RNA sequence: GGGAACGACUCGAGUAGAGUCGAAAAACUUGUUUAACAAUUGAGGCUAUGCAAGCAAGAAACCUCAGCAUCUUAGGAAUAAUUCUCAAUCAAUACUCUAAGGAAGAAGAAGAUUGGCUGCUUAAUAUAAUAACUAGAGAUUCGUCUCUAGUUAUUAAAAAGAAACAACAACAACAAC
Reactivity to 2A3 in 0.01 (KOAc 150mM, MgCl2 10mM, bicine 150mM(pH8.5), 24C), signal-to-noise 1, nucleotides 027 to 126: a010c050u010u030g000u070u070u060a090a040c040a080a070u060u200g090a060g180g000c040u020a050u150g010c010a030a040g000c020a030a000g060a020a140a050c010c000u040c000a000g030c000a030u050c010u030u070a010g030g050a090a050u070a080a080u140u020c030u000c000a030a080u000c030a000a060u100a080c010u040c040u120a030a130g150g060a100a030g020a040a000g010a030a000g000a010u050u060g030g000c000u030g000c010u160u000a150a170u260a100
Reactivity to DMS in 0.01 (KOAc 150mM, MgCl2 10mM, bicine 150mM(pH8.5), 24C), signal-to-noise 4, nucleotides 027 to 126: a070c030u000u000g000u000u000u000a080a060c050a130a100u000u020g010a060g010g020c040u000a070u000g000c100a020a030g010c040a070a080g000a090a080a080c010c010u000c040a030g010c040a050u000c050u010u000a070g010g010a070a110u000a090a080u010u000c030u000c030a060a060u000c070a070a080u000a080c090u010c040u000a070a090g010g010a070a070g000a060a070g010a080a070g010a060u000u000g010g010c070u000g010c050u000u000a050a110u000a130